RNA sequence: GGGAACGACUCGAGUAGAGUCGAAAAGAUCUGCAGGAGCUAACACGACGUGGUCUCAUUGGUGAAACCAUUGUUGAAUCGUGUAUUCAAGAUGAUGGAUUUGGCCGUUAUUGGCCACUCGACCGCCGCGACUCGUAUGAUUCGUCAUACGAGUCGCAAAAGAAACAACAACAACAAC
Reactivity to DMS in 0.01 (KOAc 150mM, MgCl2 10mM, bicine 150mM(pH8.5), 24C), signal-to-noise 2, nucleotides 027 to 126: g000a080u000c020u010g030c070a070g010g010a090g000c070u000a080a060c130a200c040g000a040c160g010u000g010g000u010c030u010c150a140u000u000g020g050u000g020a010a000a040c030c000a020u000u000g010u000u010g000a030a060u010c060g000u000g000u000a000u000u000c010a050a080g010a080u000g000a050u020g000g020a240u000u000u000g010g000c010c000g010u000u000a110u000u010g000g000c010c000a020c050u010c040g010a100c030c050g030c160c140
Reactivity to 2A3 in 0.01 (KOAc 150mM, MgCl2 10mM, bicine 150mM(pH8.5), 24C), signal-to-noise 2, nucleotides 027 to 126: g020a050u050c030u070g060c000a040g020g090a040g060c020u090a100a040c060a020c110g090a030c080g030u030g010g010u010c020u010c040a120u070u210g050g000u080g140a040a030a010c000c020a020u000u060g100u040u060g000a010a020u040c080g130u110g010u300a040u000u030c010a010a040g090a160u170g020a030u030g020g080a090u000u000u030g060g010c000c000g020u030u090a130u120u120g020g000c040c010a000c000u020c020g040a080c000c050g030c010c050

Structure probing data (DMS and 2A3) for a 177-nucleotide construct. Source: RMDB library OK2TST, as collected in RNAgym. For 2A3, 1,683 sequencing reads were counted. Values cover nucleotides 27 to 126.